[RMDB]
RNA sequence: GGGAACGACUCGAGUAGAGUCGAAAACGGGGUCUAGCCGAGACAAAACAGCGCGGAAGGUCUUCUCACUGGGCCGCCGGAACCGGACCCCUACUUGGGCCAACACAUCAUCGGAAGCGGUGGCCGCACUUUUAAUCGCCUUCGGGCGAUUAAAAGUAAAAGAAACAACAACAACAAC
Reactivity to DMS in 0.01 (KOAc 150mM, MgCl2 10mM, bicine 150mM(pH8.5), 24C), signal-to-noise 1, nucleotides 027 to 126: c180g010g010g000g000u000c070u000a050g000c000c020g010a150g020a080c200a030a070a130a190c070a070g000c110g000c030g010g000a090a060g040g010u020c050u020u000c000u000c000a060c030u010g010g010g060c020c050g010c010c000g010g000a120a020c200c080g000g000a110c100c000c020c040u000a000c080u020u000g000g000g000c000c000a040a040c020a120c040a070u020c140a030u010c090g000g000a070a120g010c070g000g010u000g000g000c010c010g020c080
Reactivity to 2A3 in 0.01 (KOAc 150mM, MgCl2 10mM, bicine 150mM(pH8.5), 24C), signal-to-noise 2, nucleotides 027 to 126: c060g000g010g000g030u000c030u030a040g070c040c040g040a030g030a000c030a000a090a050a080c060a060g080c040g000c010g080g010a090a040g040g010u010c000u070u020c000u000c000a050c090u070g020g010g010c000c000g000c000c000g010g000a030a000c030c000g000g060a080c040c000c000c000u020a090c070u090u120g060g000g000c010c050a090a060c030a010c000a100u160c010a030u090c060g010g050a120a040g040c030g020g030u010g020g030c000c000g020c000

This 177-nucleotide RNA was probed chemically with DMS and 2A3. 2A3 adducts were read by reverse transcription with SuperScript II with manganese. The 2A3 profile rests on 1,186 reads. DMS adducts were read by reverse transcription with MarathonRT.